[RMDB]
About this RNA
Chemical mapping of a 177-nucleotide RNA with DMS. The reactions ran in a buffer of 150 mM KOAc, 10 mM MgCl2 and 150 mM bicine (pH 8.5), at 24 C. For DMS, 669 sequencing reads were counted.
RNA sequence: GGGAACGACUCGAGUAGAGUCGAAAAACUAUUCUGCUCUUGGCUGAGAUGAGAAAAGUUAGUGAUCUGAGAAGCCUUGCUGGCUCUGAAAGCAGAUGAGGUCGAUUUGAAAAGCAUAAGAGCUCGAAGUGAAGAGACCAUUCGUGGUCUCUUCACUAAAAGAAACAACAACAACAAC
Reactivity to DMS in 0.01 (KOAc 150mM, MgCl2 10mM, bicine 150mM(pH8.5), 24C), signal-to-noise 1, nucleotides 027 to 126: a110c080u000a120u000u000c070u010g040c000u000c000u010u000g000g000c030u000g000a220g000a070u010g030a300g020a000a030a030a170g050u000u000a110g010u000g010a120u000c020u010g000a140g000a210a110g030c030c040u000u020g010c150u000g010g000c010u040c110u000g000a070a110a190g000c040a090g020a050u000g010a050g010g010u000c030g000a250u000u000u040g030a110a060a090a080g000c060a020u000a010a060g120a040g010c000u000c160g020a150